This 207-nucleotide RNA was probed chemically with DMS and 2A3. For DMS, 2,688 sequencing reads were counted.
[RMDB]
RNA sequence: GGGAACGACUCGAGUAGAGUCGAAAAAGUGGGAUGAAUGGAUAAAGAAAAUGUGGUACACAGACAGUAGAAUGUUAUUCAGCCAUAGUAGAGAAUGAAAUCCUGUCAUUUCGAACAACGUGGAUGAAACUGGAGGACAUUAUGUUACGUGUAAUAAUGUUACCAGGGAAUUCGUUCCCUGGUAACAAAAAGAAACAACAACAACAAC
Reactivity to DMS in 0.01 (KOAc 150mM, MgCl2 10mM, bicine 150mM(pH8.5), 24C), signal-to-noise 2, nucleotides 027 to 156: a070g060u010g010g020g010a070u000g000a090a070u000g020g000a080u010a100a110a090g010a090a060a040a110u000g060u000g010g040u000a080c050a030c050a210g000a030c020a110g050u000a130g020a060a110u000g020u000u010a170u010u000c020a140g030c010c010a060u000a110g010u000a110g000a210g000a030a120u000g020a050a060a040u000c020c020u000g030u000c010a060u000u010u000c030g000a110a100c060a080a050c060g010u000g030g020a090u000g010a030a080a080c020u000g060g000a060g050g060a030c040a080u000u020a070u010g010u010u000a040c090g010u000g050u010a070a090u000a110a150
Reactivity to 2A3 in 0.01 (KOAc 150mM, MgCl2 10mM, bicine 150mM(pH8.5), 24C), signal-to-noise 2, nucleotides 027 to 156: a000g100u050g000g040g080a140u050g000a080a040u050g010g000a030u060a210a090a050g110a020a090a030a020u060g040u040g030g040u030a040c070a020c010a050g080a030c020a010g060u050a050g040a110a010u080g050u040u100a070u050u020c030a000g010c040c000a010u020a060g040u050a010g010a020g010a020a050u060g020a070a020a030u070c010c020u040g070u050c000a040u030u140u130c040g070a050a050c020a010a020c110g010u130g010g010a020u020g010a160a000a000c050u050g010g000a000g040g000a000c010a020u040u080a050u090g010u010u040a080c130g000u010g070u050a110a140u030a040a020
The data come from the RNA Mapping Database (RMDB), library OK3TST. For DMS the reverse transcriptase was MarathonRT. Values cover nucleotides 27 to 156.